[RMDB]
RNA sequence: GGGAACGACUCGAGUAGAGUCGAAAAGAAGAGAACUUCGGUUCUCUUCAAAGCUGUUACCCACGCGAAGAAAUCCCGGAACAUUGGCUCGUUAGCGGGAGAAAACCGGGAAGUUCGCUUCCCGGAACGACAUAUAGACCUUCGGGUCUAUAUGUCGAAAAGAAACAACAACAACAAC
Reactivity to 2A3 in 0.01 (KOAc 150mM, MgCl2 10mM, bicine 150mM(pH8.5), 24C), signal-to-noise 1, nucleotides 027 to 126: g010a010a030g000a010g000a030a000c010u060u120c220g040g020u000u000c000u020c000u000u000c000a010a000a000g010c010u050g160u130u180a260c000c020c020a020c040g080c070g050a050a150g100a090a250a040u020c000c000c000g020g060a040a010c020a070u070u200g170g050c040u020c110g030u040u020a060g220c010g020g000g020a060g020a010a070a010a030c000c010g010g010g010a010a000g010u030u030c170g000c090u010u000c000c000c020g000g000a010a010
Reactivity to DMS in 0.01 (KOAc 150mM, MgCl2 10mM, bicine 150mM(pH8.5), 24C), signal-to-noise 1, nucleotides 027 to 126: g010a030a030g000a000g000a000a040c010u000u010c200g020g020u000u000c010u000c000u020u000c000a040a080a080g010c100u000g000u000u000a160c030c010c040a180c210g020c030g010a140a120g040a110a090a130u000c000c000c000g030g010a060a010c040a090u000u010g020g010c140u030c170g000u000u000a030g000c010g010g000g000a040g020a070a020a220a110c000c000g010g000g030a000a000g000u010u020c280g010c010u000u000c000c030c000g000g000a000a040